The record gives the reactivity of an RNA of 177 nucleotides to 2A3 and DMS.
The RNA was probed in 150 mM KOAc, 10 mM MgCl2 and 150 mM bicine (pH 8.5) at 24 C.
For 2A3 the reverse transcriptase was SuperScript II with manganese.
The DMS profile rests on 13,724 reads.
DMS adducts were read by reverse transcription with MarathonRT.
Reactivities are given for positions 27 through 126.
The data come from the RNA Mapping Database (RMDB), library OK1LIB.
RNA sequence: GGGAACGACUCGAGUAGAGUCGAAAAAGUUAUAAGAUCCACAGGGACCUACUGCUAUAUCGUGUUGCUGUUUGCAUGAUCAUUAUCCAAUCAGUGACCUUAAACAUAGUUCCACAUGGAAGGAACAUGAACAUGAAAGUUUCGACUUUCAUGUUCAAAAAGAAACAACAACAACAAC
Reactivity to 2A3 in 0.01 (KOAc 150mM, MgCl2 10mM, bicine 150mM(pH8.5), 24C), signal-to-noise 6, nucleotides 027 to 126: a010g110u160u090a150u040a130a070g050a080u010c020c010a060c050a080g000g000g050a030c030c010u030a030c110u040g060c040u050a040u020a030u200c080g010u050g000u200u020g000c010u010g030u050u010u030g050c060a050u070g030a040u080c030a060u070u300a020u020c030c040a030a010u030c000a010g020u010g040a030c000c000u050u180a030a110a000c030a050u050a020g000u010u010c020c000a080c040a130u120g130g030a060a060g020g010a040a020c050a070
Reactivity to DMS in 0.01 (KOAc 150mM, MgCl2 10mM, bicine 150mM(pH8.5), 24C), signal-to-noise 7, nucleotides 027 to 126: a080g000u030u020a100u020a080a130g000a060u010c010c020a050c130a120g010g020g010a050c030c030u000a050c080u000g010c080u020a060u020a080u010c160g010u030g020u010u000g010c000u000g010u000u000u000g010c290a050u000g010a070u010c140a070u010u000a110u000c080c030a040a040u000c040a010g020u010g000a030c010c040u010u030a080a120a100c150a050u000a070g010u000u010c010c000a050c110a200u010g020g000a090a070g010g000a040a020c050a130